RNA sequence: GGGAACGACUCGAGUAGAGUCGAAAAUGGUUUGAGGAGAAUAAGGAUUGGUACGACCCAAUAGAAAACUCAAAAUAUUAUGUCAUGUUGGCUAAAAUGGGACCUAUUGUACGACGUGCUUUAUUGAAUGCUAUUGAGUUCGGAAACCUUAUGGUUGCUUAGAUCACCUUUUCGAAGGUGAUCUAAGAAAAGAAACAACAACAACAAC
Reactivity to DMS in 0.01 (KOAc 150mM, MgCl2 10mM, bicine 150mM(pH8.5), 24C), signal-to-noise 2, nucleotides 027 to 156: u000g010g050u010u010u000g020a120g000g010a140g030a100a100u000a070a130g020g010a140u000u020g000g020u000a120c100g000a040c040c010c030a070a120u010a130g010a090a040a130a120c050u010c040a040a040a050a100u010a120u000u000a050u000g000u000c030a090u010g020u020u000g020g010c050u040a020a030a070a090u010g000g020g010a050c040c030u000a110u010u000g010u000a070c000g010a030c010g000u000g010c130u010u000u000a150u010u000g000a040a100u000g010c060u000a080u000u000g010a050g000u000u030c030g000g000a130a080a070c030c020u000u000a070u010g020g040u000u000g010
Reactivity to 2A3 in 0.01 (KOAc 150mM, MgCl2 10mM, bicine 150mM(pH8.5), 24C), signal-to-noise 1, nucleotides 027 to 156: u110g050g070u050u070u130g030a040g050g020a080g030a090a090u130a100a010g040g020a050u010u120g050g000u040a010c030g010a020c010c020c000a010a010u050a030g060a020a130a040a030c020u020c050a060a080a030a000u140a060u180u120a080u090g060u040c040a010u020g070u110u020g050g030c040u090a070a000a060a130u030g010g020g050a020c010c010u060a050u080u070g020u030a060c010g010a000c000g020u020g020c000u090u100u110a130u070u120g040a070a040u120g000c030u010a010u040u050g000a010g050u100u050c030g000g000a110a020a010c010c000u050u060a090u110g060g050u060u030g010